[RMDB]
RNA sequence: GGGAACGACUCGAGUAGAGUCGAAAAGGAUGCCUAGUGGCAGCCCCACAAUAUCCAGGAAGCCCUCUCUGCGGUUAUUCAGAUUAGGUAGUCGAAAAACCUAAGAAAUUUACCUUGAGGCUUCGGAGUCGUCUUAAUGUAUAGAUUUGAAGAAGAGGAUUGUAUGUAAGUUCGCUUACAUACAAUCAAAAGAAACAACAACAACAAC
Reactivity to 2A3 in 0.01 (KOAc 150mM, MgCl2 10mM, bicine 150mM(pH8.5), 24C), signal-to-noise 2, nucleotides 027 to 156: g030g030a030u020g000c040c070u200a070g070u210g100g010c010a020g040c010c000c000c030a060c020a040a150u160a100u070c010c030a020g110g060a000a010g030c020c040c000u020c000u000c080u160g130c090g010g020u030u030a010u050u110c060a020g070a280u050u010a010g010g010u020a020g100u100c090g100a050a020a140a020a000c000c000u000a010a000g030a000a080a040u140u170u100a030c000c000u000u010g000a020g020g000c000u000u010c000g000g000a000g000u040c040g000u000c030u110u170a200a100u120g070u060a070u070a160g070a150u050u190u230g070a060a040g030a020a010g030a020g190
Reactivity to DMS in 0.01 (KOAc 150mM, MgCl2 10mM, bicine 150mM(pH8.5), 24C), signal-to-noise 2, nucleotides 027 to 156: g010g030a090u000g000c010c000u010a090g060u010g020g000c020a030g010c010c010c030c040a060c090a060a090u000a060u020c040c010a070g000g030a050a060g000c110c020c010u000c000u010c110u000g050c110g000g030u010u000a040u000u010c020a110g030a300u000u000a020g020g020u000a120g000u010c070g010a120a080a120a070a080c020c000u000a050a080g000a050a100a040u000u010u000a060c020c050u000u010g010a050g000g000c010u020u010c000g030g000a100g010u000c060g020u020c040u000u000a070a140u020g020u000a130u010a050g010a180u010u000u000g000a120a090g000a060a090g010a180g000